The record gives the reactivity of an RNA of 177 nucleotides to DMS and 2A3.
RNA sequence: GGGAACGACUCGAGUAGAGUCGAAAACGCUAUAGAUUCGUCUAUAGCGACUCCUACCCGCCGGCCGGUGCGCGCGGUAGGUGACGCAAACGACCGUGCGAAAUGUACUGGUUUUCGAACCAGUAAAUUAUUGACAGUUUUUCGAAACUGUCAAUAAAAAAGAAACAACAACAACAAC
Reactivity to DMS in 0.01 (KOAc 150mM, MgCl2 10mM, bicine 150mM(pH8.5), 24C), signal-to-noise 4, nucleotides 027 to 126: c010g010c000u000a000u000a000g000a040u000u010c180g010u000c000u000a000u000a000g020c000g010a050c100u000c010c010u000a100c130c130c010g010c020c000g010g010c010c020g010g020u000g000c040g030c040g020c030g010g020u000a050g020g010u000g000a120c040g000c030a010a110a140c040g000a020c010c010g010u010g030c000g010a050a090a080u010g000u000a010c000u000g000g010u000u000u000u010c180g010a020a010c000c000a010g000u000a010a060a120
Reactivity to 2A3 in 0.01 (KOAc 150mM, MgCl2 10mM, bicine 150mM(pH8.5), 24C), signal-to-noise 2, nucleotides 027 to 126: c010g000c000u000a000u000a020g000a020u000u060c140g020u000c080u000a010u000a010g000c000g000a000c000u000c010c000u000a060c030c010c010g000c000c000g060g030c000c020g040g020u050g010c050g000c000g000c040g080g050u080a090g200g000u020g040a070c030g000c040a020a180a080c030g020a010c010c030g080u170g030c020g040a090a030a060u170g000u030a000c000u000g000g020u010u010u060u060c130g030a010a010c000c000a000g000u020a000a020a000
The reactions ran in a buffer of 150 mM KOAc, 10 mM MgCl2 and 150 mM bicine (pH 8.5), at 24 C.
For 2A3, 5,568 sequencing reads were counted.